RNA sequence: GGGAACGACUCGAGUAGAGUCGAAAAGAUAUGGAUAGCCUGAUCAUGGAGUCGUCUACAACUAUCCUCUCGGAAACGAGAGGACGAAUUGUCGACGACGUUGAAAUGAUCAGGCUAUCCUAAGUCAUCAUCGUUUAUAGUUCGCUAUAAACGAUGAAAAAGAAACAACAACAACAAC
Reactivity to 2A3 in 0.01 (KOAc 150mM, MgCl2 10mM, bicine 150mM(pH8.5), 24C), signal-to-noise 1, nucleotides 027 to 126: g000a020u080a010u140g000g020a030u020a030g000c000c000u050g000a010u040c010a040u060g090g020a010g030u010c000g020u000c000u030a010c000a020a010c070u060a010u010c020c000u000c000u020c000g020g040a120a060a050c030g010a000g010a030g040g030a000c000g000a090a300u020u000g000u020c010g020a010c030g020a000c000g020u040u020g000a020a010a010u020g000a000u000c000a000g000g000c000u020a010u000c000c000u000a010a010g020u010c010a070
Reactivity to DMS in 0.01 (KOAc 150mM, MgCl2 10mM, bicine 150mM(pH8.5), 24C), signal-to-noise 6, nucleotides 027 to 126: g010a060u000a300u010g010g000a020u000a000g000c000c010u000g010a010u000c000a010u000g000g000a090g010u000c010g020u000c010u000a010c000a010a010c140u000a300u010c000c000u000c000u000c000g010g000a120a100a190c010g000a020g010a000g010g000a000c060g000a030a080u000u000g010u000c080g000a030c000g010a000c000g010u000u020g000a160a140a010u000g000a000u000c000a000g000g010c000u000a000u000c000c000u000a010a070g010u000c040a220
The data come from the RNA Mapping Database (RMDB), library TTRINS. Structure probing data (2A3 and DMS) for a 177-nucleotide construct. For 2A3, 3,570 sequencing reads were counted. Conditions: 150 mM KOAc, 10 mM MgCl2 and 150 mM bicine (pH 8.5), 24 C.